[RMDB]
RNA sequence: GGGAACGACUCGAGUAGAGUCGAAAACGCGUCGCCCCGCUUUACGCUUUCUUGAUUGCCAGCGGUUAGCGUGGCGCCCCGGAUGUCCUUCGAAUACGGGGUUUUAUCGAGAUGGCGCAGACGCUGACGUCCAUGCUAAUUUCGAUUAGCAUGGACGAAAAGAAACAACAACAACAAC
Reactivity to DMS in 0.01 (KOAc 150mM, MgCl2 10mM, bicine 150mM(pH8.5), 24C), signal-to-noise 2, nucleotides 027 to 126: c180g000c050g000u000c000g040c090c030c010c050g000c120u030u010u060a100c020g000c000u000u000u000c000u020u010g000a070u020u000g050c030c000a070g000c000g020g010u060u040a090g050c000g030u000g020g030c000g000c010c010c010c000g000g040a050u030g000u000c020c200u010u070c120g000a070a000u000a220c000g000g010g000g010u000u000u030u010a020u010c000g000a030g000a010u000g020g010c000g040c120a080g020a040c000g030c040u010g010a290
Reactivity to 2A3 in 0.01 (KOAc 150mM, MgCl2 10mM, bicine 150mM(pH8.5), 24C), signal-to-noise 7, nucleotides 027 to 126: c070g010c010g000u000c010g030c000c000c010c010g120c070u080u170u100a030c020g010c010u030u020u000c000u020u040g030a030u030u140g020c020c020a030g020c020g220g080u130u200a050g020c100g090u060g010g000c010g000c000c000c000c010g010g000a090u180g080u140c060c040u210u230c190g080a070a020u060a050c010g000g000g000g000u000u050u050u140a020u010c040g010a010g010a030u020g000g000c020g000c010a000g000a010c000g000c010u030g030a030
Chemical mapping of a 177-nucleotide RNA with DMS and 2A3. For DMS the reverse transcriptase was MarathonRT. The RNA was probed in 150 mM KOAc, 10 mM MgCl2 and 150 mM bicine (pH 8.5) at 24 C. Values cover nucleotides 27 to 126. The DMS profile rests on 4,064 reads.